[RMDB]
RNA sequence: GGGAACGACUCGAGUAGAGUCGAAAAGUACUUCGUCAACUUGGAGAUGUUAUUACGCAUGGAGAAAAACCUCUCGGAGCGUAUGUCCACGGAGCGCAUGGAAAAUAUAGAGUCCAGACUCGACGACUUCUAAGAGGUGAAGAACGGGAAAAUGAAAUAAACUAUGUUCAUUCGUGAACAUAGUUUAAAAAGAAACAACAACAACAAC
Reactivity to 2A3 in 0.01 (KOAc 150mM, MgCl2 10mM, bicine 150mM(pH8.5), 24C), signal-to-noise 6, nucleotides 027 to 156: g010u040a050c010u020u040c020g040u020c020a120a090c060u040u060g040g010a080g030a080u060g040u130u120a150u120u050a020c030g000c020a020u190g040g010a030g040a050a120a060a060a050c020c020u020c010u030c040g110g100a020g000c000g000u010a020u070g010u020c040c020a050c110g030g010a030g020c080g000c060a070u050g020g080a050a050a120a010u260a040u070a060g110a010g060u010c040c020a030g030a050c020u010c030g050a050c000g030a060c010u030u000c000u020a050a020g010a000g030g010u040g010a020a020g020a040a010c040g000g030g020a030a090a040a070u160g020a040a100a020
Reactivity to DMS in 0.01 (KOAc 150mM, MgCl2 10mM, bicine 150mM(pH8.5), 24C), signal-to-noise 4, nucleotides 027 to 156: g000u000a070c040u000u000c020g010u000c030a050a070c040u000u000g020g030a200g010a080u000g010u000u010a080u000u000a050c040g040c030a110u000g000g000a100g000a040a090a130a110a090c110c070u000c020u000c020g030g000a150g000c020g010u000a030u000g000u000c050c060a080c050g030g010a060g030c050g020c060a120u000g010g010a030a080a070a120u010a160u000a130g000a140g000u010c010c030a110g010a080c030u000c030g000a120c010g010a110c030u000u000c030u000a070a180g010a050g000g020u000g020a020a050g010a040a030c050g010g010g000a040a030a080a100u000g010a090a090a170
Description: An RNA of 207 nucleotides, treated with 2A3 and DMS and read out base by base. DMS adducts were read by reverse transcription with MarathonRT. As a SHAPE reagent, 2A3 marks flexible, mostly unpaired nucleotides at the ribose 2'-OH.